RNA sequence: GGGAACGACUCGAGUAGAGUCGAAAACAGGCGUGUCUGCUGCAAAGGAUGUUUGGGUGGACGCUGCGCCUUCCGCGCGCGGCAGCGUAUCUCGAAUAUUUUCCCGUUGGUGGGACCUUGGGCGCGGUCUAGUCAGCGUGUUCGCGCGUUGGCUAGAAAAAGAAACAACAACAACAAC
Reactivity to 2A3 in 0.01 (KOAc 150mM, MgCl2 10mM, bicine 150mM(pH8.5), 24C), signal-to-noise 4, nucleotides 027 to 126: c020a000g040g000c000g020u070g010u010c010u040g000c000u020g010c020a020a000a020g030g010a040u030g040u010u020u030g020g000g010u030g040g010a010c000g000c010u000g000c000g030c000c000u100u010c010c020g010c000g000c000g000c000g040g010c000a000g000c000g010u010a070u020c050u000c020g040a050a020u040a060u050u050u020u010c000c000c000g010u040u060g030g030u040g000g010g010a000c000c000u000u040g030g010g000c000g000c020g000g000